[RMDB]
RNA sequence: GGGAACGACUCGAGUAGAGUCGAAAACAAAGGAAUGAAUAAAUGAAAGUGGCAGUUGUCAUUAAACCUUUUUCCUUUUCUUGUAUCACCCCAAAGUAUGAAAGACUAUGGACUCCUUCACUCAUUAAAAAAAAAAAUUUAGGCCAGGUGUGGUGGCUAUAACUCACAAUUUCGAUUGUGAGUUAUAAAAAGAAACAACAACAACAAC
Reactivity to DMS in 0.01 (KOAc 150mM, MgCl2 10mM, bicine 150mM(pH8.5), 24C), signal-to-noise 1, nucleotides 027 to 156: c030a090a020a050g010g020a070a080u010g010a100a170u010a040a050a100u000g020a070a150a040g020u000g020g030c070a150g000u000u020g030u000c020a140u000u000a040a160a130c010c030u000u000u000u000u000c000c020u000u020u000u000c000u010u000g010u020a100u000c040a100c070c030c000c020a050a070a180g030u000a030u040g000a110a080a080g000a080c020u010a070u000g030g000a030c010u000c020c010u010u010c030a050c030u000c060a090u020u030a000a000a000a000a000a000a240a110a110a190a300u030u000u000a050g010g030c000c010a030g010g010u000g040u010g000g040u010g010g010c070
Reactivity to 2A3 in 0.01 (KOAc 150mM, MgCl2 10mM, bicine 150mM(pH8.5), 24C), signal-to-noise 1, nucleotides 027 to 156: c010a000a090a000g020g000a070a000u060g060a050a020u180a150a110a000u070g030a070a180a080g050u000g000g000c030a040g110u230u170g020u070c070a070u040u100a120a100a160c070c000u070u030u020u020u080c010c000u000u080u010u060c060u050u120g020u060a060u050c040a050c020c000c000c000a010a070a000g120u070a080u200g040a050a080a000g010a010c060u110a070u110g020g030a080c000u080c030c020u070u070c100a080c100u160c100a080u080u260a010a060a040a000a000a040a000a000a200a000a030u300u070u040a050g040g000c050c010a000g000g010u020g010u010g020g020u000g020g000c000
Conditions: 150 mM KOAc, 10 mM MgCl2 and 150 mM bicine (pH 8.5), 24 C. This 207-nucleotide RNA was probed chemically with DMS and 2A3. The 2A3 profile rests on 625 reads.